[RMDB]
RNA sequence: GGGAACGACUCGAGUAGAGUCGAAAAGAUAUGGACUUUGAUGGAGACCAUUCGGAAACGAACUAGGUCUAUGAAGUCGGGAGUCCUAAGUCAAACUCCUGGGUUAGGUUCGCCUAACCCAGGAGAAGACAGCUUCAUAGUUCGCUAUGAAGCUGUCAAAAGAAACAACAACAACAAC
Reactivity to 2A3 in 0.01 (KOAc 150mM, MgCl2 10mM, bicine 150mM(pH8.5), 24C), signal-to-noise 1, nucleotides 027 to 126: g050a020u070a000u200g000g000a020c010u060u090u090g000a020u010g000g050a000g000a030c000c000a000u010u000c000g000g000a050a000a000c010g000a000a030c100u180a300g000g010u000c010u040a300u030g040a030a010g010u000c000g080g020g030a000g000u000c000c000u000a080a010g050u060c060a120a040a150c000u000c000c000u000g030g020g000u000u010a000g020g040u040u110c250g060c100c000u000a000a000c020c010c020a010g000g000a010g000a000a000
Reactivity to DMS in 0.01 (KOAc 150mM, MgCl2 10mM, bicine 150mM(pH8.5), 24C), signal-to-noise 1, nucleotides 027 to 126: g010a040u000a300u000g010g040a070c000u010u010u010g010a020u000g020g020a000g010a020c010c000a300u000u010c020g000g020a070a050a230c000g000a020a020c200u010a090g000g000u000c000u010a190u010g010a090a120g000u000c010g030g000g000a000g000u000c000c010u070a030a180g020u010c040a210a140a190c000u000c000c000u040g010g000g000u000u000a020g000g020u000u040c250g010c000c000u000a020a010c010c000c000a000g000g010a000g000a040a050